[RMDB]
An RNA of 177 nucleotides, treated with DMS and 2A3 and read out base by base. The 2A3 profile rests on 1,266 reads. Source: RMDB library VIROID, as collected in RNAgym.
RNA sequence: GGGAACGACUCGAGUAGAGUCGAAAAUGGGGUGAAAAGGGAGGAUCGGAUGGGAAGAGUAUAUCCUAUGGGAAUCCCUGGGUGCCUCUCGUGUCCAGCCCACUCCCGGUCCGACUAAAGGGGGACUACCCACUAUAAGGUUCGCCUUAUAGUGGGUAAAAGAAACAACAACAACAAC
Reactivity to DMS in 0.01 (KOAc 150mM, MgCl2 10mM, bicine 150mM(pH8.5), 24C), signal-to-noise 2, nucleotides 027 to 126: u000g030g000g000g010u000g000a060a040a130a150g010g010g010a090g000g010a100u020c030g030g000a080u000g000g030g000a100a020g020a080g050u000a140u000a120u010c010c000u000a060u010g000g000g010a210a160u050c000c050c030u010g000g000g000u020g020c140c040u010c020u000c110g000u000g020u030c140c040a130g010c050c030c010a070c110u020c030c000c000g020g000u020c010c010g020a130c090u000a040a070a150g010g000g020g000g000a060c210u010
Reactivity to 2A3 in 0.01 (KOAc 150mM, MgCl2 10mM, bicine 150mM(pH8.5), 24C), signal-to-noise 2, nucleotides 027 to 126: u120g000g000g060g020u180g070a100a070a050a080g030g010g000a030g000g010a030u030c000g000g040a000u030g020g000g020a030a050g020a040g120u060a050u020a020u230c010c010u040a140u200g050g000g070a040a300u100c030c000c010u010g000g030g000u010g050c060c000u100c030u020c050g190u130g060u030c000c040a040g030c040c000c000a030c060u150c000c010c060g010g010u030c020c020g050a020c060u140a100a080a110g010g020g000g010g040a010c040u040